[RMDB]
RNA sequence: GGGAACGACUCGAGUAGAGUCGAAAAAGGAAGGCGUGACCAAGGAACAAGCACUCAGCCUUCUGAGUACCAACAAGGUUGAGAAGCUGCCUAUCGUCGAUAAGCAAGGCAAACUCGUCGGUCUGAUCACGGUGAAAGACUUCGUCAAGACCGAGCAUGCAUCAUACGUAUUCGUACGUAUGAUGCAAAAAGAAACAACAACAACAAC
Reactivity to DMS in 0.01 (KOAc 150mM, MgCl2 10mM, bicine 150mM(pH8.5), 24C), signal-to-noise 2, nucleotides 027 to 156: a170g040g000a070a090g020g000c040g040u000g010a070c070c070a080a160g040g010a100a080c080a120a020g000c030a270c010u000c010a070g040c040c020u000u000c020u000g010a130g010u000a220c090c090a030a100c050a000a060g040g000u000u000g010a080g020a080a130g020c010u000g070c000c040u000a160u010c050g000u010c040g010a070u020a030a130g020c010a090a060g040g020c030a080a070a060c020u000c070g010u000c010g020g000u030c020u010g010a060u010c080a100c180g040g000u000g000a160a150a180g000a100c010u000u030c020g000u000c040a100a130g010a050c030c000g030a070g000c100a130
Reactivity to 2A3 in 0.01 (KOAc 150mM, MgCl2 10mM, bicine 150mM(pH8.5), 24C), signal-to-noise 3, nucleotides 027 to 156: a010g020g000a020a030g050g000c110g030u070g010a090c050c040a050a080g080g020a130a120c070a120a020g010c020a020c050u020c000a000g000c000c000u030u030c010u010g000a000g070u090a100c070c000a050a030c030a090a060g020g010u000u020g010a010g020a120a040g020c020u000g000c000c020u050a150u120c030g050u000c060g050a120u030a100a070g030c060a060a010g030g060c050a090a040a110c040u070c070g130u000c010g060g010u000c000u000g030a020u130c050a020c090g080g000u060g050a090a080a070g150a030c000u050u020c090g000u020c070a090a040g000a030c000c000g020a000g000c080a050

Chemical mapping of a 207-nucleotide RNA with DMS and 2A3. The RNA was probed in 150 mM KOAc, 10 mM MgCl2 and 150 mM bicine (pH 8.5) at 24 C.